[RMDB]
RNA sequence: GGGAACGACUCGAGUAGAGUCGAAAAGAUAUGGAGGGAGCAACAGCCCACGGUGGUCGGAAACGACCAUUGGGACAUGCUCCGCUCCUAAGUCAAAGUUCAAUUUGCCUUCGGGCAAAUUGAACAACACAGAAUAUACCUUCGGGUAUAUUCUGUGAAAAGAAACAACAACAACAAC
Reactivity to DMS in 0.01 (KOAc 150mM, MgCl2 10mM, bicine 150mM(pH8.5), 24C), signal-to-noise 5, nucleotides 027 to 126: g010a030u010a260u010g010g000a010g020g010g010a010g010c000a020a070c240a200g010c020c010c000a070c300g020g010u000g010g030u000c010g000g000a070a090a170c010g010a010c000c000a000u000u000g000g000g000a020c060a180u000g020c000u000c000c000g010c000u000c000c000u000a020a090g000u000c040a090a110a160g000u000u000c000a010a000u000u000u000g000c000c000u000u010c190g020g020g000c000a000a000a000u000u010g000a000a010c020a080a160
Reactivity to 2A3 in 0.01 (KOAc 150mM, MgCl2 10mM, bicine 150mM(pH8.5), 24C), signal-to-noise 2, nucleotides 027 to 126: g030a030u070a030u160g000g000a010g010g000g010a010g020c000a000a130c070a110g100c020c010c020a030c090g110g020u010g010g000u020c000g010g040a090a060a030c010g000a010c020c010a000u010u010g020g020g020a020c010a050u040g000c000u010c010c010g140c020u000c000c000u010a090a010g040u010c050a190a060a070g000u010u000c010a020a000u000u010u010g000c000c010u060u090c300g060g000g000c000a020a000a000u010u000g000a000a010c010a010a000
Chemical mapping of a 177-nucleotide RNA with DMS and 2A3.
2A3 adducts were read by reverse transcription with SuperScript II with manganese.
Conditions: 150 mM KOAc, 10 mM MgCl2 and 150 mM bicine (pH 8.5), 24 C.
It was measured as part of the RMDB library TTRDEL.
The 2A3 profile rests on 7,918 reads.
DMS adducts were read by reverse transcription with MarathonRT.